[RMDB]
RNA sequence: GGGAACGACUCGAGUAGAGUCGAAAAACAGGAUGCUCUGACAUUGGAAUCAAAUGCGUAUCCACUUUCAGCAGAUUACGAAUUAAAUUGAUGGCUUCCAGAGGCCGCACGCUAAGGUGAUCCAGCGCAGCUACCGAGAUUUCGAUCUCGGUAGCUGAAAAGAAACAACAACAACAAC
Reactivity to DMS in 0.01 (KOAc 150mM, MgCl2 10mM, bicine 150mM(pH8.5), 24C), signal-to-noise 2, nucleotides 027 to 126: a140c070a160g010g010a050u020g020c030u000c020u000g020a140c090a050u000u000g020g020a180a130u000c050a050a110a070u000g030c050g040u020a080u010c010c030a110c130u020u000u000c060a090g010c150a050g000a040u020u010a080c080g000a120a060u000u000a030a060a140u020u000g000a070u020g000g010c040u010u000c000c060a110g010a080g000g040c030c020g020c070a050c060g000c110u010a020a070g020g010u000g030a040u000c040c060a060g000c050g000
Reactivity to 2A3 in 0.01 (KOAc 150mM, MgCl2 10mM, bicine 150mM(pH8.5), 24C), signal-to-noise 2, nucleotides 027 to 126: a010c060a030g010g050a020u050g030c000u000c050u070g050a030c000a000u020u010g020g130a090a210u120c000a010a080a100u150g050c100g010u010a030u030c040c020a020c080u020u080u070c050a050g000c020a020g040a130u100u130a050c030g030a080a020u210u080a240a110a100u110u090g030a100u120g050g000c040u110u000c050c040a050g050a040g220g000c020c010g050c020a000c040g040c040u020a060a050g060g000u070g020a060u000c040c010a050g100c030g000